[RMDB]
Conditions: 150 mM KOAc, 10 mM MgCl2 and 150 mM bicine (pH 8.5), 24 C. Structure probing data (DMS and 2A3) for a 177-nucleotide construct. The DMS profile rests on 4,441 reads. The 2A3 profile rests on 5,585 reads.
RNA sequence: GGGAACGACUCGAGUAGAGUCGAAAAGUGAGAAUGUUCGCAUUCUCACAAAUAAAUUCAGCGGUUUAAAUUAGCUCCGGAUAACCGCUGAUGCGGAGCUAAAAAGCUUGCCGUUCGCGGCAAGCAACAAUAUACAGAUGUUCGCAUCUGUAUAUUGAAAAGAAACAACAACAACAAC
Reactivity to DMS in 0.01 (KOAc 150mM, MgCl2 10mM, bicine 150mM(pH8.5), 24C), signal-to-noise 3, nucleotides 027 to 126: g000u000g010a020g010a020a000u000g010u000u010c200g010c000a010u000u000c000u000c000a000c000a040a070a080u000a030a080a080u010u000c000a010g000c010g010g000u010u000u010a050a100a140u000u000a020g010c000u000c010c010g020g020a090u010a060a070c020c020g000c010u000g000a010u000g020c040g020g000a030g010c000u000a030a060a140a150a080g010c000u000u000g010c010c000g020u000u010c230g050c030g010g010c000a000a000g010c010a040a040
Reactivity to 2A3 in 0.01 (KOAc 150mM, MgCl2 10mM, bicine 150mM(pH8.5), 24C), signal-to-noise 3, nucleotides 027 to 126: g000u010g000a000g000a000a010u010g010u070u100c150g020c100a000u000u000c000u000c010a000c000a000a000a000u020a000a010a020u060u020c000a010g010c020g030g120u030u140u190a110a190a110u110u060a070g010c000u000c020c010g050g040a050u060a120a060c030c000g010c010u010g000a000u000g000c030g010g000a010g000c030u050a050a070a000a010a070g010c000u010u000g020c010c000g030u040u040c260g010c010g070g000c000a010a000g000c000a000a010